[RMDB]
RNA sequence: GGGAACGACUCGAGUAGAGUCGAAAAUGGUGACAGCGAUGAUAAGACGUUGAUGUCUUUCCUUAAAGCCUGGGUUAAGCGUUGCGCGGUUCACGCCAAUGGGGACAGUUGCGACGACAACGACGCAGAGAGAUACGGUAUUCGUACCGUAUCUCUCAAAAGAAACAACAACAACAAC
Reactivity to DMS in 0.01 (KOAc 150mM, MgCl2 10mM, bicine 150mM(pH8.5), 24C), signal-to-noise 5, nucleotides 027 to 126: u000g000g010u000g010a050c050a040g020c050g010a070u000g010a090u010a090a060g010a080c030g020u010u010g010a090u010g000u000c010u000u000u000c030c050u000u000a070a100a120g010c060c020u010g010g020g030u000u000a090a110g020c030g020u000u000g010c060g010c030g010g010u000u000c060a060c070g030c120c140a060a070u000g010g000g010g000a040c070a060g010u000u000g010c020g010a070c040g010a060c070a020a060c050g010a090c110g000c160a120
Reactivity to 2A3 in 0.01 (KOAc 150mM, MgCl2 10mM, bicine 150mM(pH8.5), 24C), signal-to-noise 4, nucleotides 027 to 126: u110g030g000u050g010a020c020a020g030c020g040a050u080g010a040u080a210a030g100a020c050g030u090u140g060a080u100g010u000c000u020u040u030c010c000u040u090a120a060a020g040c020c020u080g010g070g000u020u090a110a010g030c030g010u020u020g000c030g000c000g010g040u040u060c030a040c050g030c060c050a100a140u180g010g010g020g010a000c010a030g030u110u190g120c020g010a020c020g020a030c050a050a010c060g070a020c030g030c150a010
An RNA of 177 nucleotides, treated with DMS and 2A3 and read out base by base. In probing experiments dimethyl sulfate is read out at A N1 and C N3, which are open when not base-paired. DMS adducts were read by reverse transcription with MarathonRT. The RNA was probed in 150 mM KOAc, 10 mM MgCl2 and 150 mM bicine (pH 8.5) at 24 C.